[RMDB]
Notes: Conditions: 150 mM KOAc, 10 mM MgCl2 and 150 mM bicine (pH 8.5), 24 C. The record gives the reactivity of an RNA of 177 nucleotides to DMS and 2A3. It was measured as part of the RMDB library OK2TRN. The 2A3 profile rests on 4,546 reads.
RNA sequence: GGGAACGACUCGAGUAGAGUCGAAAAGAAAGGGAAUCUCGAUCACGCAACACUAUGGUUCGAUGCUUAGCCCAGGGAGACAACCAAAUCAUAAGUUGCCUUUACAAAACAGAUCCAUGGUCCAACACCAAUGCACUAAGUUCGCUUAGUGCAUUGGAAAAGAAACAACAACAACAAC
Reactivity to DMS in 0.01 (KOAc 150mM, MgCl2 10mM, bicine 150mM(pH8.5), 24C), signal-to-noise 4, nucleotides 027 to 126: g010a050a100a090g000g010g000a060a050u000c030u000c110g000a090u010c050a090c130g010c030a030a030c070a030c130u000a050u000g010g030u000u000c040g030a140u010g010c050u010u010a110g010c040c040c040a130g000g000g000a040g010a030c080a030a020c050c040a060a040a070u000c140a050u010a070a050g020u010u000g020c010c050u000u000u010a070c120a060a020a050a100c160a040g010a050u000c030c030a020u000g010g010u000c030c030a060a060c190a150
Reactivity to 2A3 in 0.01 (KOAc 150mM, MgCl2 10mM, bicine 150mM(pH8.5), 24C), signal-to-noise 3, nucleotides 027 to 126: g040a030a030a010g060g020g060a110a110u010c020u030c050g030a060u060c040a000c070g000c010a050a030c030a040c100u040a070u060g020g020u040u050c030g010a070u130g030c010u030u080a040g010c000c000c000a020g000g050g010a020g020a020c010a020a020c020c000a070a060a050u120c050a070u080a160a040g030u020u020g030c010c000u050u150u040a110c070a020a100a090a020c030a030g010a060u000c000c010a040u070g030g020u040c030c000a030a000c030a020